[RMDB]
RNA sequence: GGGAACGACUCGAGUAGAGUCGAAAAGGGGUCACUCACGUUGAUCGAUCACUGUCGGUAAUACUUACCUGAAGCCUCCACGGGUAAGUGCCAGACAUCUGUGAUCGGGAGUGAGUGACGGAGGCACCCAAAACAAGCCCGAUUCGUCGGGCUUGAACCACAACAGUCGGUUCGCCGACUGUUGUGGAAAAGAAACAACAACAACAAC
Reactivity to 2A3 in 0.01 (KOAc 150mM, MgCl2 10mM, bicine 150mM(pH8.5), 24C), signal-to-noise 1, nucleotides 027 to 156: g060g040g070g000u030c000a000c000u010c000a000c000g160u170u050g070a040u100c000g010a000u000c000a000c010u010g030u060c030g060g110u090a130a180u090a210c000u010u010a000c000c000u010g090a160a040g000c000c000u000c010c000a030c000g000g000g000u010a000a000g010u000g030c030c000a130g030a080c010a100u000c120u190g010u000g000a010u000c000g000g010g010a090g010u000g000a000g000u000g000a000c000g000g010a000g040g000c010a010c020c000c000a030a100a000a030c010a000a000g020c000c000c000g000a020u040u070c200g080u010c000g110g000g030c000u000u000g000a000a010
The data come from the RNA Mapping Database (RMDB), library RNAMAK. This 207-nucleotide RNA was probed chemically with 2A3. The 2A3 profile rests on 1,195 reads. The reactions ran in a buffer of 150 mM KOAc, 10 mM MgCl2 and 150 mM bicine (pH 8.5), at 24 C. For 2A3 the reverse transcriptase was SuperScript II with manganese.